[RMDB]
RNA sequence: GGGAACGACUCGAGUAGAGUCGAAAAGCUACAUGAAUCAGUAGCAUACAGCAUAGAUACAGAUAGCAUAGAACUACGUAUAUAGUAUAGUAAGUAAUGUCUAGUAGUACUAAGAUAUAAUGGUUCGGUGUUGGGUCGGGUUCGCUCGGUUCGGUGCAAAAGAAACAACAACAACAAC
Reactivity to 2A3 in 0.01 (KOAc 150mM, MgCl2 10mM, bicine 150mM(pH8.5), 24C), signal-to-noise 9, nucleotides 027 to 126: g000c000u000a010c000a080u140g090a080a050u090c020a030g000u010a000g000c010a010u070a020c030a020g030c010a040u040a030g080a020u050a040c030a000g150a060u050a010g000c020a010u010a040g040a030a010c010u020a000c020g050u020a020u010a010u010a040g080u020a020u010a010g050u020a090a000g010u010a050a020u050g040u010c000u010a020g020u020a010g010u000a030c000u020a020a040g030a020u040a000u010a060a110u060g010g000u010u010c020g010
Reactivity to DMS in 0.01 (KOAc 150mM, MgCl2 10mM, bicine 150mM(pH8.5), 24C), signal-to-noise 9, nucleotides 027 to 126: g000c010u000a010c040a090u020g010a100a080u030c130a100g010u000a010g010c010a120u030a090c120a100g010c090a090u020a060g010a080u010a050c060a070g010a120u010a030g010c030a060u010a080g010a050a030c010u000a020c090g000u010a040u010a060u010a060g010u010a050u010a000g010u020a030a060g010u020a080a060u010g010u000c000u010a050g000u020a100g010u010a120c010u000a030a090g000a050u010a030u010a050a100u010g000g000u000u000c010g010